RNA sequence: GGGAACGACUCGAGUAGAGUCGAAAAACCUAUGGAUUCGUCCAUAGGUGCUGGCGCGCGGCCUUUGUGCUGUCGCGUGUGCGUGGUGGGCGAUAUACGCGCAAUAGUGACAAUUCGUUGUCACUAACCCUGCCUACUUUUUCGAAAGUAGGCAGGGAAAAGAAACAACAACAACAAC
Reactivity to DMS in 0.01 (KOAc 150mM, MgCl2 10mM, bicine 150mM(pH8.5), 24C), signal-to-noise 1, nucleotides 027 to 126: a020c000c000u000a000u000g010g000a020u000u020c250g020u010c000c000a000u000a020g010g010u000g020c100u000g010g000c000g010c000g030c040g010g000c000c010u000u020u010g010u000g000c000u000g030u020c000g020c000g060u010g020u000g010c000g000u000g010g020u000g030g020g010c100g000a120u000a120u000a060c060g010c030g000c070a140a140u010a000g000u000g000a020c000a010a070u000u000c250g010u000u010g000u000c000a030c000u000a020a100
Reactivity to 2A3 in 0.01 (KOAc 150mM, MgCl2 10mM, bicine 150mM(pH8.5), 24C), signal-to-noise 1, nucleotides 027 to 126: a000c000c000u010a000u000g020g010a020u000u090c190g020u010c070c010a000u000a000g030g000u010g110c070u050g070g000c020g010c000g000c000g010g020c020c000u020u160u170g070u130g000c000u020g080u190c000g000c000g030u010g020u040g020c040g020u060g020g060u070g050g050g040c020g010a000u040a010u040a200c020g010c000g000c000a010a070u070a050g000u010g000a010c010a010a010u040u030c220g050u100u000g000u000c000a000c000u010a010a020